[RMDB]
Description
This 207-nucleotide RNA was probed chemically with 2A3. The reactions ran in a buffer of 150 mM KOAc, 10 mM MgCl2 and 150 mM bicine (pH 8.5), at 24 C.

RNA sequence: GGGAACGACUCGAGUAGAGUCGAAAAGGCUGACAAUAGAUGUUGGCUGUUGCCUGGAGAAGACAUAUGUGGCGUGGUGGAAUGGAAUGGUGACUAGAUUCAAGAAAGAGCUUCCCAGGAGGAAGGCUACCAAGAGACCGAAGUAGAGGCUUCAGUACCGCGCGUCCCGUUUCGACGGGACGCGCGGAAAAGAAACAACAACAACAAC
Reactivity to 2A3 in 0.01 (KOAc 150mM, MgCl2 10mM, bicine 150mM(pH8.5), 24C), signal-to-noise 1, nucleotides 027 to 156: g000g000c010u010g000a030c020a010a140u080a110g130a150u120g020u000u010g010g040c040u030g060u060u070g020c000c000u000g020g030a100g020a070a060g050a010c040a030u140a040u170g060u020g020g030c020g000u070g000g000u000g010g110a050a080u050g040g040a030a040u070g020g010u060g000a000c020u020a030g010a080u060u100c060a010a030g040a090a070a000g110a040g000c000u000u020c010c010c000a030g060g000a020g020g020a050a000g040g000c020u010a070c010c010a060a010g040a000g030a030c000c060g010a030a000g000u050a010g020a010g020g010c000u060u020c010a030g010u050a010